This 177-nucleotide RNA was probed chemically with DMS. DMS (dimethyl sulfate) methylates the pairing face of unpaired adenines and cytosines. For DMS the reverse transcriptase was MarathonRT. The reactions ran in a buffer of 150 mM KOAc, 10 mM MgCl2 and 150 mM bicine (pH 8.5), at 24 C.
[RMDB]
RNA sequence: GGGAACGACUCGAGUAGAGUCGAAAACAGCCUGUUGACAGCCACGUGUGUAAGCUUCUUCGGAGUCAUAGGGUUCGUUGGGCUCGUCGCGCCGCACACGGCUAGGCUUAUGGCCGGCGAGGAUCAGUGGUAGUGCAGGUUUCGACCUGCACUACCAAAAAGAAACAACAACAACAAC
Reactivity to DMS in 0.01 (KOAc 150mM, MgCl2 10mM, bicine 150mM(pH8.5), 24C), signal-to-noise 2, nucleotides 027 to 126: c080a200g000c030c000u010g000u010u010g000a050c270a080g000c000c020a050c050g040u000g000u000g030u010a070a140g000c030u000u130c020u000u010c140g040g010a030g060u040c040a130u020a200g000g000g000u000u000c070g000u000u000g020g010g010c010u000c020g010u000c000g000c300g000c040c040g000c030a040c040a060c000g000g000c130u010a060g010g020c000u010u000a070u010g010g010c000c060g010g010c020g000a080g000g010a090u000c050a090g030